[RMDB]
The record gives the reactivity of an RNA of 207 nucleotides to 2A3.
RNA sequence: GGGAACGACUCGAGUAGAGUCGAAAACUGUAUUGUUCGCAAUACAGAAAAAGCGUACUACCAGUGGUGUGGGAGAGCGCCAUCCCAAAUAGGAUGGACGCUCGAAGAACACACGUAACAUCUGGUAUCGCAAAAAAGAUGUCCUUCGGGACAUCAAGUAGUCGGGUAGUUUCGACUACCCGACUACAAAAGAAACAACAACAACAAC
Reactivity to 2A3 in 0.01 (KOAc 150mM, MgCl2 10mM, bicine 150mM(pH8.5), 24C), signal-to-noise 1, nucleotides 027 to 156: c000u000g010u000a030u000u000g060u040u200c270g010c120a010a000u000a000c000a000g150a060a030a000a000a000g050c030g010u070a080c050u010a020c030c000a000g010u030g050g020u010g020u030g080g040g000a060g000a000g010c000g000c000c000a000u000c000c000c000a090a300a130u240a130g020g000a000u010g000g060a210c010g000c000u000c000g000a000a010g000a000a010c020a000c020a020c010g000u010a150a000c020a300u150c060u000g110g000u000a070u230c020g000c000a010a010a010a010a010a000g000a000u000g000u010c000c000u000u050c150g150g000g000a000c000a000u000c000a020a000
Reactivities are given for positions 27 through 156.